Record summary: An RNA of 177 nucleotides, treated with DMS and 2A3 and read out base by base. The RNA was probed in 150 mM KOAc, 10 mM MgCl2 and 150 mM bicine (pH 8.5) at 24 C. It was measured as part of the RMDB library OK1LIB. Values cover nucleotides 27 to 126. The 2A3 profile rests on 680 reads. For 2A3 the reverse transcriptase was SuperScript II with manganese.
RNA sequence: GGGAACGACUCGAGUAGAGUCGAAAACGUGAAGAUCUCGACGACUCAACGGAGCGGCGCCUGAUGAUUAUAGACCCCAUCAAGGUCGUGAUUGACAACUGGGACGGUGAGAUGGAGGCGGAGUGCCCCGGGCAGUACCAUUCGUGGUACUGCCCGGAAAAGAAACAACAACAACAAC
Reactivity to DMS in 0.01 (KOAc 150mM, MgCl2 10mM, bicine 150mM(pH8.5), 24C), signal-to-noise 2, nucleotides 027 to 126: c070g020u000g000a090a110g000a010u030c020u010c020g010a070c010g010a070c080u030c070a110a110c110g000g040a080g000c000g000g000c010g030c050c000u020g000a060u070g000a130u030u010a260u010a140g050a080c130c040c070c080a030u000c100a070a110g000g000u000c030g000u010g000a300u000u000g020a020c120a080a140c140u010g000g000g060a020c060g020g000u000g000a080g040a160u000g000g020a200g020g000c030g000g000a180g000u000g000c020c030
Reactivity to 2A3 in 0.01 (KOAc 150mM, MgCl2 10mM, bicine 150mM(pH8.5), 24C), signal-to-noise 1, nucleotides 027 to 126: c000g060u040g040a070a030g000a130u030c030u040c110g100a090c000g000a010c000u000c030a020a010c030g020g000a040g000c000g000g000c030g120c000c010u010g000a020u000g000a000u000u120a100u190a160g080a080c000c000c000c000a050u030c000a020a020g010g000u160c030g000u000g030a170u080u140g000a050c050a030a020c160u000g000g000g020a000c000g000g040u020g080a000g000a010u010g010g190a060g030g030c000g000g010a000g090u140g010c000c000